RNA sequence: GGGAACGACUCGAGUAGAGUCGAAAAACUCUUCAAACGGACAUUCAUUCAAUACCGCGAACUCUUGCCACUAUUGACCAACUCAUCGCAAGUGAAAAUGCUAAGCACGCACAUUUCAAAGCGAUUACAUCCAUAUCACAUUCGUGUGAUAUGGAUGAAAAGAAACAACAACAACAAC
Reactivity to DMS in 0.01 (KOAc 150mM, MgCl2 10mM, bicine 150mM(pH8.5), 24C), signal-to-noise 5, nucleotides 027 to 126: a100c050u010c020u000u000c080a060a080a110c110g010g010a070c080a070u000u000c060a070u010u010c090a080a070u000a060c080c070g020c060g010a050a060c080u000c030u000u000g010c010c030a070c090u000a070u010u000g010a110c080c050a050a050c070u000c100a050u000c040g010c020a030a130g020u000g010a010a010a020a150u000g000c030u010a060a090g000c170a060c160g020c040a040c090a100u010u000u010c030a050a070a230g030c030g020a050u000u010a130
Reactivity to 2A3 in 0.01 (KOAc 150mM, MgCl2 10mM, bicine 150mM(pH8.5), 24C), signal-to-noise 6, nucleotides 027 to 126: a000c030u050c000u100u070c050a070a060a060c060g050g020a030c020a090u060u070c020a030u110u060c040a150a070u040a150c030c030g020c030g040a070a060c010u020c030u060u080g020c020c010a040c020u050a070u080u110g040a040c020c020a060a060c030u040c060a030u020c020g000c010a100a070g050u010g070a060a030a000a000u010g000c020u100a110a090g120c050a030c130g040c000a020c030a200u020u060u060c030a050a030a000g000c010g010a000u020u090a030